[RMDB]
RNA sequence: GGGAACGACUCGAGUAGAGUCGAAAACAUUUCUAAUCUGUACUGUUCUUUGAGGAGGAGUAAAUAUCAUUACCGUCAAUAAGGGAAGGUGUUCAGUCUUUCUCAUUAAAGAGAAGCACAUUAACACAAUAGUGAAAUACUAGCUUUCACCUAGGUAAAAAUGAUCGUCGUUCGCGACGAUCAUUUUAAAAGAAACAACAACAACAAC
Reactivity to DMS in 0.01 (KOAc 150mM, MgCl2 10mM, bicine 150mM(pH8.5), 24C), signal-to-noise 1, nucleotides 027 to 156: c090a080u000u000u000c050u000a120a060u000c060u020g010u000a060c020u010g000u000u000c020u000u000u090g000a060g000g000a050g030g010a070g030u000a030a030a060u000a000u010c050a120u010u010a110c000c020g000u000c070a160a170u000a110a110g010g010g010a060a100g070g020u010g040u000u010c040a050g020u010c030u010u020u000c000u000c010a090u000u010a080a090a060g030a030g020a030a030g020c010a030c020a060u000u010a090a120c070a100c050a030a110u020a030g020u010g000a010a080a040u000a190c090u000a080g020c120u000u000u010c020a020c050c020u000a080g070g000u010a000
Reactivity to 2A3 in 0.01 (KOAc 150mM, MgCl2 10mM, bicine 150mM(pH8.5), 24C), signal-to-noise 2, nucleotides 027 to 156: c010a040u140u080u070c090u120a130a090u000c050u050g080u050a070c000u040g080u160u020c000u020u050u080g030a030g040g000a020g030g000a010g050u090a020a120a100u090a020u080c030a040u090u080a070c020c010g120u080c080a170a140u080a160a110g010g020g020a030a010g040g000u010g040u030u040c020a030g030u000c000u000u130u020c000u010c000a060u150u230a080a070a010g030a000g010a020a000g050c040a010c000a080u020u200a110a060c040a020c000a050a090u040a060g030u020g050a060a020a020u160a080c060u050a020g010c010u050u010u060c020a030c010c000u010a020g090g000u080a070